[RMDB]
RNA sequence: GGGAACGACUCGAGUAGAGUCGAAAAGUCGAUAUCGGACCCGAAAGAGGUGUUCGGAGCGUCGAACUCCGGGUCUAAGUAGUAAUGACCGGAGACGAACCCUCCCACUCGACCGUGAGCGGGCGUCUAUAGCAGAUGAUUUCGAUCAUCUGCUAUAAAAAGAAACAACAACAACAAC
Reactivity to 2A3 in 0.01 (KOAc 150mM, MgCl2 10mM, bicine 150mM(pH8.5), 24C), signal-to-noise 3, nucleotides 027 to 126: g030u010c000g010a030u020a080u190c040g030g030a040c030c000c030g060a080a180a010g150a040g020g030u110g020u130u040c050g020g040a060g040c040g040u020c000g030a090a080c000u010c000c000g070g060g010u020c010u040a100a060g060u070a030g040u060a270a100u100g010a000c000c030g000g020a030g010a010c030g020a040a100c010c000c040u020c020c000c020a040c010u030c040g130a150c100c060g080u080g040a030g000c030g000g050g000c040g060u030c040
Reactivity to DMS in 0.01 (KOAc 150mM, MgCl2 10mM, bicine 150mM(pH8.5), 24C), signal-to-noise 5, nucleotides 027 to 126: g010u000c020g010a050u010a090u000c040g020g010a070c000c020c010g020a060a120a140g010a110g010g020u000g010u000u020c020g010g010a090g020c160g010u000c030g000a070a220c010u000c000c000g010g020g000u000c010u000a080a150g020u010a140g010u010a110a120u010g000a100c000c010g010g000a030g010a180c080g000a070a100c030c020c010u000c010c010c020a070c050u000c020g000a090c160c220g000u010g010a050g020c050g000g010g000c290g000u010c090

Chemical mapping of a 177-nucleotide RNA with 2A3 and DMS. As a SHAPE reagent, 2A3 marks flexible, mostly unpaired nucleotides at the ribose 2'-OH. The reactions ran in a buffer of 150 mM KOAc, 10 mM MgCl2 and 150 mM bicine (pH 8.5), at 24 C. It was measured as part of the RMDB library OK2TST.